An RNA of 207 nucleotides, treated with DMS and 2A3 and read out base by base.

[RMDB]
RNA sequence: GGGAACGACUCGAGUAGAGUCGAAAACAGGAGAUCAGCAUAGCUCCAUUCUACUAUGCAUCUAGUCGUCGUUUUCGACGUCUAGUAUAGCCCUACACUGCUGGGGCGAUGAACAGCAGAUUACCACUACUCGUAGCGUGGGUUAUGGCUACGUACAAUUAUAAAUGACCUUCGGGUCAUUUAUAAUAAAAGAAACAACAACAACAAC
Reactivity to DMS in 0.01 (KOAc 150mM, MgCl2 10mM, bicine 150mM(pH8.5), 24C), signal-to-noise 4, nucleotides 027 to 156: c050a130g010g010a130g010a090u010c060a300g010c000a020u000a020g000c010u000c080c240a200u000u010c020u010a010c000u000a010u000g020c020a230u000c010u000a020g010u000c020g030u000c010g030u000u000u010u000c040g020a020c000g020u000c010u000a030g010u000a080u000a110g010c020c010c000u000a050c050a200c050u010g000c040u000g000g000g030g010c020g000a070u000g010a060a090c020a030g000c020a040g010a210u000u000a080c030c020a110c020u010a080c050u000c080g000u000a040g010c050g010u000g020g010g000u000u010a060u010g010g010c000u000a030c050g000u000a070c090a100
Reactivity to 2A3 in 0.01 (KOAc 150mM, MgCl2 10mM, bicine 150mM(pH8.5), 24C), signal-to-noise 5, nucleotides 027 to 156: c050a010g040g010a030g000a050u170c080a060g000c000a000u010a010g020c020u010c010c020a060u130u080c020u040a060c000u010a000u020g020c030a030u030c020u000a000g020u010c000g010u000c010g030u040u080u150u300c030g020a000c010g000u000c000u000a010g020u030a100u110a030g010c020c000c010u050a050c090a030c060u020g000c020u000g000g000g000g030c050g060a120u180g060a050a040c030a010g020c000a010g010a060u070u200a080c030c030a040c040u160a040c020u040c050g000u010a000g000c010g010u040g010g070g020u040u160a070u100g070g000c000u010a000c000g020u010a020c050a040
The data come from the RNA Mapping Database (RMDB), library OK3TST. 2A3 is a SHAPE reagent: it acylates the 2'-hydroxyl of flexible nucleotides of all four kinds. The DMS profile rests on 11,242 reads. For 2A3 the reverse transcriptase was SuperScript II with manganese. The reactions ran in a buffer of 150 mM KOAc, 10 mM MgCl2 and 150 mM bicine (pH 8.5), at 24 C.